[RMDB]
RNA sequence: GGGAACGACUCGAGUAGAGUCGAAAAGAUAUGGAAUAUGUUGCUGCGUCACAUGAUGACCUCGGAAACGAGCAAGUGUGACACAGCACUCAUAUUCCUAAGUCACGGACCUGGUUCGCCAGGUCAACACAGAAGUAUUCUUCGGAAUACUUCUGUGAAAAGAAACAACAACAACAAC
Reactivity to DMS in 0.01 (KOAc 150mM, MgCl2 10mM, bicine 150mM(pH8.5), 24C), signal-to-noise 8, nucleotides 027 to 126: g010a040u000a300u000g000g000a020a000u000a000u000g010u000u000g000c000u000g010c050g000u000c000a010c000a010u000g000a090u010g000a090c300c000u000c010g000g000a110a100a140c010g010a010g000c030a050a090g020u000g010u000g000a010c000a010c000a000g010c000a000c140u000c000a010u000a010u000u000c000c000u000a020a050g000u000c040a150c220g010g000a020c000c000u000g000g000u000u000c210g020c000c000a010g000g000u000c010a040a130
Reactivity to 2A3 in 0.01 (KOAc 150mM, MgCl2 10mM, bicine 150mM(pH8.5), 24C), signal-to-noise 7, nucleotides 027 to 126: g030a020u090a040u190g000g010a000a000u010a000u020g030u020u010g000c000u000g010c010g020u020c000a000c010a020u060g090a260u120g050a160c020c000u010c010g020g050a090a090a080c020g000a000g010c030a150a300g010u000g000u000g010a000c000a000c000a010g000c000a000c000u010c000a000u010a000u000u000c000c000u010a100a030g040u020c020a010c190g140g000a000c000c000u010g000g040u060u100c210g060c090c000a000g000g000u020c000a000a000